[RMDB]
RNA sequence: GGGAACGACUCGAGUAGAGUCGAAAAUUUCGCCAUGAUCCGCGACGAAGAACGGCUGUGAACUCCGCUCAAGCAGCCGAUCCCGCUCCUUCGCGUAAGCCGCAAGCUGUAAUGUGGUACACCUUGAACCGGAGGACUGAUUCGUCAGUCCUCCGGUAAAAGAAACAACAACAACAAC
Reactivity to 2A3 in 0.01 (KOAc 150mM, MgCl2 10mM, bicine 150mM(pH8.5), 24C), signal-to-noise 1, nucleotides 027 to 126: u050u040u150c020g020c010c000a130u130g020a010u060c000c080g030c030g010a080c030g070a000a050g030a180a010c000g000g000c000u010g020u070g070a070a080c020u000c060c060g100c040u010c080a040a000g010c000a010g000c000c000g010a020u020c000c000c020g000c000u060c010c020u030u000c000g000c020g030u020a030a030g010c000c000g000c050a060a020g050c000u020g030u220a080a150u040g040u050g060g030u010a020c080a110c070c000u000u000g020a060
Reactivity to DMS in 0.01 (KOAc 150mM, MgCl2 10mM, bicine 150mM(pH8.5), 24C), signal-to-noise 1, nucleotides 027 to 126: u000u000u030c000g080c000c000a070u060g000a100u050c000c130g000c000g000a190c060g000a270a100g010a020a300c000g000g000c010u060g000u000g000a070a030c090u000c010c040g070c030u000c050a160a290g090c020a000g020c030c000g030a010u000c000c070c000g040c000u110c000c000u000u000c060g030c030g000u060a070a000g000c020c120g000c170a090a280g000c010u000g000u020a080a140u000g010u000g000g000u000a100c280a130c060c000u020u050g000a090